[RMDB]
RNA sequence: GGGAACGACUCGAGUAGAGUCGAAAAGAUAUGGAUCCGUAACAAGCUGAUGACCAUGUGGAGUACGACCAUAUCGGAAACGAUAUGGUUGAAACACAUGCAAGGCUUGGAGAAGGAUCCUAAGUCACAGUUACAACAAGUUCGCUUGUUGUAACUGAAAAGAAACAACAACAACAAC
Reactivity to DMS in 0.01 (KOAc 150mM, MgCl2 10mM, bicine 150mM(pH8.5), 24C), signal-to-noise 5, nucleotides 027 to 126: g020a020u000a060u010g010g020a000u000c010c000g010u000a170a300c010a010a010g030c010u010g020a040u000g010a160c300c010a010u000g000u000g010g020a100g010u000a140c160g010a010c010c010a020u000a000u010c000g010g000a030a000a040c000g010a010u000a000u000g000g000u000u010g010a100a200a150c000a010c000a000u000g000c000a040a030g010g010c000u000u000g000g000a080g010a160a280g000g000a000u000c000c010u010a000a060g010u000c000a300
Reactivity to 2A3 in 0.01 (KOAc 150mM, MgCl2 10mM, bicine 150mM(pH8.5), 24C), signal-to-noise 2, nucleotides 027 to 126: g010a000u020a010u070g000g000a000u000c010c020g010u020a030a020c010a010a010g010c000u010g050a300u040g000a220c000c000a000u010g000u010g010g040a100g080u090a060c100g000a000c010c000a000u010a000u000c010g010g000a020a010a000c010g010a000u000a010u000g000g000u010u020g000a000a010a010c000a010c000a010u020g000c000a190a300g000g010c000u000u000g000g000a000g000a010a050g010g000a000u000c010c000u010a020a010g000u000c000a020
The record gives the reactivity of an RNA of 177 nucleotides to DMS and 2A3. For DMS, 4,757 sequencing reads were counted. For 2A3 the reverse transcriptase was SuperScript II with manganese.